[RMDB]
RNA sequence: GGGAACGACUCGAGUAGAGUCGAAAAGAAAGGGACCCCUGCCACGGGAGCGUCGGUCAGCACCCAAGGCAUAUUUUUUUAUGCCGCUGACACCCCUCGACGCGGCAGGAGGGGUGGUCCCGAAAGAAGUAUCGAUCACUUUCGAGUGAUCGAUACUAAAAGAAACAACAACAACAAC
Reactivity to DMS in 0.01 (KOAc 150mM, MgCl2 10mM, bicine 150mM(pH8.5), 24C), signal-to-noise 2, nucleotides 027 to 126: g010a120a150a160g010g010g010a010c000c000c000c000u010g020c000c020a050c090g000g000g030a050g020c130g030u000c110g010g010u000c010a040g010c000a120c180c110c220a130a110g010g010c000a000u000a000u000u000u010u010u020u000u000a000u010g000c000c000g000c000u000g000a100c030a070c040c020c150c030u000c000g010a100c010g020c040g000g020c010a050g000g000a050g020g000g000g020u000g030g000u010c000c000c000g000a030a040a080g000a090
Chemical mapping of a 177-nucleotide RNA with DMS. High DMS reactivity at an A or C suggests that its Watson-Crick edge is free. DMS adducts were read by reverse transcription with MarathonRT. Values cover nucleotides 27 to 126. The reactions ran in a buffer of 150 mM KOAc, 10 mM MgCl2 and 150 mM bicine (pH 8.5), at 24 C. The DMS profile rests on 1,446 reads.